[RMDB]
RNA sequence: GGGAACGACUCGAGUAGAGUCGAAAAGAUAUGGACAUGACUCGCCGAUGAAAGCAUCGGAAACGAUGCUGGAGGAACUACGAGCAAUGUGUCCUAAGUCAAAUCCCUUACGUUCGCGUAAGGGAAAGAACCAUAACCAGUUCGCUGGUUAUGGUUCAAAAGAAACAACAACAACAAC
Reactivity to DMS in 0.01 (KOAc 150mM, MgCl2 10mM, bicine 150mM(pH8.5), 24C), signal-to-noise 3, nucleotides 027 to 126: g000a020u000a170u010g010g010a030c000a010u000g000a150c010u000c010g010c030c070g010a110u030g000a300a120a020g010c000a000u000c020g010g000a040a020a080c010g000a010u000g000c010u000g000g010a120g000g030a080a070c080u010a170c010g000a030g010c040a210a090u010g010u000g000u000c000c000u000a010a090g000u010c030a080a090a120u000c000c000c000u000u000a000c000g010u000u020c250g030c030g020u000a000a000g000g000g000a000a000a030
Reactivity to 2A3 in 0.01 (KOAc 150mM, MgCl2 10mM, bicine 150mM(pH8.5), 24C), signal-to-noise 4, nucleotides 027 to 126: g010a010u040a030u100g000g000a030c020a030u130g200a300c010u010c010g120c060c090g190a240u050g050a010a020a000g000c010a000u010c000g010g000a020a010a010c010g000a000u000g020c000u010g010g000a020g010g030a180a080c140u170a050c230g010a010g020c030a070a180u300g020u010g000u100c000c000u010a080a020g040u020c010a080a000a160u060c010c000c000u020u000a020c010g020u020u060c300g000c010g120u000a010a000g010g000g000a000a000a000
An RNA of 177 nucleotides, treated with DMS and 2A3 and read out base by base.
The DMS profile rests on 3,535 reads.
DMS adducts were read by reverse transcription with MarathonRT.
The RNA was probed in 150 mM KOAc, 10 mM MgCl2 and 150 mM bicine (pH 8.5) at 24 C.
For 2A3 the reverse transcriptase was SuperScript II with manganese.